About this RNA:
This 177-nucleotide RNA was probed chemically with DMS and 2A3. For DMS the reverse transcriptase was MarathonRT. Conditions: 150 mM KOAc, 10 mM MgCl2 and 150 mM bicine (pH 8.5), 24 C. 2A3 adducts were read by reverse transcription with SuperScript II with manganese. High DMS reactivity at an A or C suggests that its Watson-Crick edge is free. It was measured as part of the RMDB library M2PK90.
[RMDB]
RNA sequence: GGGAACGACUCGAGUAGAGUCGAAAAAAUAUGCUCGACAGGCUGCCUGUCCGACAGAGCUUUUAGAUCUUCUGAUCUUUCCCUGCAGCAUAUCGCUUAUGCAUCAAGCGAUUGUGGGAUCACACAACACUCCUAAUAGUUUCGACUAUUAGGAGUGAAAAGAAACAACAACAACAAC
Reactivity to DMS in 0.01 (KOAc 150mM, MgCl2 10mM, bicine 150mM(pH8.5), 24C), signal-to-noise 9, nucleotides 027 to 126: a090a090u000a060u000g010c100u000c050g010a040c050a040g010g010c150u000g010c050c020u000g010u010c030c040g020a030c070a060g000a120g010c210u000u000u000u000a020g000a010u000c000u010u010c270u010g010a010u000c010u000u000u000c000c000c000u000g010c140a230g000c040a040u010a020u000c010g010c010u000u000a070u010g010c180a100u010c140a050a020g000c010g010a020u000u000g010u000g000g010g000a120u010c090a110c080a060c140a060a120
Reactivity to 2A3 in 0.01 (KOAc 150mM, MgCl2 10mM, bicine 150mM(pH8.5), 24C), signal-to-noise 8, nucleotides 027 to 126: a000a000u230a060u080g010c040u010c010g010a010c010a020g030g030c090u110g200c030c020u030g020u050c020c020g030a020c020a040g020a010g020c000u000u030u020u020a010g000a010u020c010u280u050c160u300g000a010u000c000u000u010u010c010c000c000u030g050c060a080g000c010a040u040a020u190c000g000c010u050u030a070u210g120c060a110u150c100a030a000g000c010g020a030u030u040g010u030g030g050g040a090u230c050a030c010a000c010a160a120